[RMDB]
RNA sequence: GGGAACGACUCGAGUAGAGUCGAAAAGCAUAACUGUUCGCAGUUAUGCAAAACACCAAGCUGGAAACAGACGCAGUGAAACAAACAAAAGCGAAAACAAAAAAAGCCAACAGUUCGCUGUUGGCAACAUAGCUAGAGACUUCGGUCUCUAGCUAUGAAAAGAAACAACAACAACAAC
Reactivity to 2A3 in 0.01 (KOAc 150mM, MgCl2 10mM, bicine 150mM(pH8.5), 24C), signal-to-noise 2, nucleotides 027 to 126: g000c010a010u010a010a010c000u020g030u070u090c160g000c040a000g000u020u010a010u000g000c000a030a050a000a030c030a000c000c020a000a040g070c020u020g050g020a030a060a070c010a050g080a070c060g000c060a010g010u020g100a160a080a030c060a020a130a030c030a050a130a110a000g010c010g080a060a040a070a050c130a050a190a000a020a010a030a050g000c010c000a010a000c000a000g030u110u080c160g020c100u000g000u010u000g000g000c000a000a000
Reactivity to DMS in 0.01 (KOAc 150mM, MgCl2 10mM, bicine 150mM(pH8.5), 24C), signal-to-noise 2, nucleotides 027 to 126: g000c000a010u000a000a000c000u000g010u000u020c110g040c000a040g010u000u000a020u000g020c000a000a050a160a030c070a070c010c030a120a270g000c000u000g000g000a160a090a110c020a000g000a030c060g020c250a120g030u030g000a070a100a110c090a030a050a100c070a030a040a120a000g000c040g000a060a020a070a050c160a050a050a100a060a020a030a190g000c000c000a000a000c000a000g010u000u000c230g030c000u000g010u000u000g000g000c000a000a020